[RMDB]
Structure probing data (2A3 and DMS) for a 207-nucleotide construct. 2A3 adducts were read by reverse transcription with SuperScript II with manganese. For 2A3, 2,046 sequencing reads were counted. The RNA was probed in 150 mM KOAc, 10 mM MgCl2 and 150 mM bicine (pH 8.5) at 24 C.
RNA sequence: GGGAACGACUCGAGUAGAGUCGAAAAAACUGGUCAGACGGAUUAUAUUUAGAAUAUCCUUUAGGCAUUACAUAAAGGUGUUUGUGCAUAGUGAUGAUAGAUACAGCAGGAUUAUCAUAAGAAGAAGGAAUUAGGGCUUGGGCGCAGUGGCUCACACUACCUCUUUAAGUUUCGACUUAAAGAGGUAAAAAGAAACAACAACAACAAC
Reactivity to 2A3 in 0.01 (KOAc 150mM, MgCl2 10mM, bicine 150mM(pH8.5), 24C), signal-to-noise 3, nucleotides 027 to 156: a000a000c060u080g030g020u050c010a030g030a090c030g040g000a020u100u120a090u110a060u220u200u130a080g030a060a050u070a040u110c010c000u080u050u030a070g010g040c050a070u060u110a050c050a050u150a080a070a050g050g010u020g010u030u120u070g030u000g010c050a040u040a070g040u040g040a050u030g000a010u020a090g070a020u060a070c030a030g040c000a000g000g050a020u050u080a030u110c060a030u050a190a020g040a050a000g000a010a020g060g010a010a030u080u040a080g000g020g040c080u060u010g030g000g000c000g000c000a010g000u020g010g010c020u000c010a030c000a010c030
Reactivity to DMS in 0.01 (KOAc 150mM, MgCl2 10mM, bicine 150mM(pH8.5), 24C), signal-to-noise 4, nucleotides 027 to 156: a090a050c030u000g010g030u010c020a110g000a100c060g010g020a120u000u000a110u000a100u000u000u010a150g010a070a080u020a080u010c010c010u000u000u010a060g030g010c050a110u000u000a070c070a060u000a040a070a050g030g020u000g010u000u000u010g020u000g020c060a100u000a080g030u000g010a080u010g000a120u000a030g010a140u010a070c060a050g040c020a110g010g000a100u000u000a060u010c040a070u010a070a110g020a060a090g000a080a060g010g010a040a080u000u000a080g020g030g020c020u000u000g000g020g020c060g010c040a090g000u000g010g000c030u000c040a060c080a090c100